[RMDB]
Structure probing data (2A3 and DMS) for a 207-nucleotide construct. The reactions ran in a buffer of 150 mM KOAc, 10 mM MgCl2 and 150 mM bicine (pH 8.5), at 24 C. The 2A3 profile rests on 4,278 reads. DMS adducts were read by reverse transcription with MarathonRT. For 2A3 the reverse transcriptase was SuperScript II with manganese. Reactivities are given for positions 27 through 156.
RNA sequence: GGGAACGACUCGAGUAGAGUCGAAAAUGGUGGCCAACCAGGUACGAAAGCGUUACCUGCGCGAAGAGCUCAGCGAUCUCAACCAAAGAAUCCAGACGUACUGCGAAGACCUGGAAAGUCGCGUGUCCGAGGCGGAGGCGCUGCUCAAACAACAGUGAGCAGUGAUUAUAUUCGUAUAAUCACUGCUAAAAGAAACAACAACAACAAC
Reactivity to 2A3 in 0.01 (KOAc 150mM, MgCl2 10mM, bicine 150mM(pH8.5), 24C), signal-to-noise 4, nucleotides 027 to 156: u100g030g030u020g020g020c010c010a010a020c010c000a010g000g010u030a010c050g090a300a150a040g110c030g050u060u040a020c010c000u050g050c050g000c030g090a110a100g010a010g020c040u030c130a010g000c030g050a230u020c030u020c050a040a130c030c040a090a080a040g050a040a050u060c040c020a020g030a070c060g070u090a070c030u070g040c030g040a080a020g030a080c000c010u020g020g000a070a050a010g090u070c010g010c040g040u060g060u000c040c010g000a040g050g000c050g020g020a020g000g030c020g020c020u010g000c000u010c030a090a130a060c050a030a010c020a050g090u080g100
Reactivity to DMS in 0.01 (KOAc 150mM, MgCl2 10mM, bicine 150mM(pH8.5), 24C), signal-to-noise 3, nucleotides 027 to 156: u000g000g000u000g030g070c010c020a090a110c060c010a050g010g000u000a080c050g000a150a100a200g020c050g040u000u000a070c020c010u010g010c010g020c060g020a240a140g010a060g030c030u000c010a050g000c020g030a100u000c040u000c010a090a120c030c040a040a100a130g010a090a070u000c020c020a090g010a080c080g050u000a150c080u000g000c110g020a090a090g010a160c080c010u000g000g020a010a090a080g000u000c010g000c080g000u000g020u000c030c020g000a250g010g000c060g000g030a110g020g010c050g010c010u010g000c000u000c010a120a090a140c020a010a030c030a040g000u010g000